[RMDB]
RNA sequence: GGGAACGACUCGAGUAGAGUCGAAAAAGUAUCGGGUUCGCCCGAUACUAGAGCACCACUCCUGCGGGAGUUAAGGCGAAACGCACAGGCGGGUGCAAAGCCAACUCAAGGGUUUCGACCCUUGAAAUAGUUCGACGAAAUUCGUUUCGUCGAACUAAAAAGAAACAACAACAACAAC
Reactivity to DMS in 0.01 (KOAc 150mM, MgCl2 10mM, bicine 150mM(pH8.5), 24C), signal-to-noise 1, nucleotides 027 to 126: a010g000u000a000u000c010g020g000g090u000u030c190g010c010c000c000g000a000u000a000c000u010a050g000a210g000c020a070c000c020a090c010u000c030c000u020g020c170g010g000g060a140g040u000u000a080a110g030g020c050g000a030a210a100c060g020c030a030c050a040g000g000c090g000g000g000u010g000c020a050a040a200g000c010c010a060a080c300u000c000a010a000g000g030g020u000u000u000c140g110a010c000c000c000u010u020g010a000a070a050

Annotation: Conditions: 150 mM KOAc, 10 mM MgCl2 and 150 mM bicine (pH 8.5), 24 C. Structure probing data (DMS) for a 177-nucleotide construct. Source: RMDB library M2PK50, as collected in RNAgym. For DMS the reverse transcriptase was MarathonRT.